[RMDB]
RNA sequence: GGGAACGACUCGAGUAGAGUCGAAAAACAUAGUUCGCUAUGUACCUGGGGGGUCCGACGUUUGACGGACAUGCGGCAUACACUGAAGCCUCCACGGUGUAUAUCGCAACAGCCCGAGUCGGACGGAGGCACCCGUGCACGAUUCUUCGGAAUCGAAUACAGCAAAAUUUUUCGAAAUUUUGCUGUAAAAAGAAACAACAACAACAAC
Reactivity to DMS in 0.01 (KOAc 150mM, MgCl2 10mM, bicine 150mM(pH8.5), 24C), signal-to-noise 2, nucleotides 027 to 156: a050c010a030u000a020g020u000u000c230g030c020u000a000u010g010u000a110c010c010u000g050g000g020g030g080g030u010c000c000g020a040c010g030u010u000u010g010a220c050g030g010a000c010a200u000g010c010g070g030c110a010u000a050c010a000c000u000g000a070a200g010c020c020u000c020c020a300c080g030g060u000g020u000a010u000a010u000c020g040c010a100a050c160a140g000c020c000c000g040a190g010u000c000g000g010a020c040g000g000a010g070g040c010a130c070c030c040g000u010g000c050a180c020g000a050u000u000c010u010u000c300g030g000a030a020u000c010g000a100a260
Reactivity to 2A3 in 0.01 (KOAc 150mM, MgCl2 10mM, bicine 150mM(pH8.5), 24C), signal-to-noise 3, nucleotides 027 to 156: a000c010a000u020a020g010u040u040c200g030c110u020a000u010g010u040a100c000c020u040g010g000g010g000g010g010u000c000c000g000a010c020g050u080u100u230g120a110c050g000g000a010c040a110u300g000c000g000g000c000a000u000a000c000a000c000u020g030a070a020g020c000c000u000c010c000a010c000g040g000u000g010u000a000u000a000u000c010g000c040a110a230c060a190g010c000c000c000g000a010g010u010c000g000g000a000c010g000g000a000g000g010c000a020c010c050c040g110u140g030c100a050c130g010a010u010u000c010u050u050c200g100g000a000a000u020c000g000a030a070